[RMDB]
RNA sequence: GGGAACGACUCGAGUAGAGUCGAAAACAUGUGUACUUCGGUACACAUGAAAUGACCGCCAUUAUUGGCUAAGGCUACACGGACGGCCGGGUCAAAUGGCGAAAAUCGUUGCGUUCGCGCAACGAAACCCCAUAUCCCCGUUCGCGGGGAUAUGGGGAAAAGAAACAACAACAACAAC
Reactivity to 2A3 in 0.01 (KOAc 150mM, MgCl2 10mM, bicine 150mM(pH8.5), 24C), signal-to-noise 1, nucleotides 027 to 126: c000a000u020g010u000g000u010a000c000u000u080c200g110g000u000a000c000a000c000a010u010g000a010a010a030u130g030a060c090c010g010c010c000a020u060u080a230u190u090g020g000c020u050a290a140g000g030c010u000a060c170a110c170g200g180a030c090g030g000c050c000g040g020g000u000c010a000a000a000u010g000g050c000g050a040a010a010a020u000c000g010u010u000g040c050g030u020u100c220g000c000g000c040a000a000c000g040a010a000a010
Structure probing data (2A3) for a 177-nucleotide construct.
Values are in units of 0.01, from 0 to 300, in steps of 10.
The data come from the RNA Mapping Database (RMDB), library M2PK50.
The RNA was probed in 150 mM KOAc, 10 mM MgCl2 and 150 mM bicine (pH 8.5) at 24 C.
For 2A3, 991 sequencing reads were counted.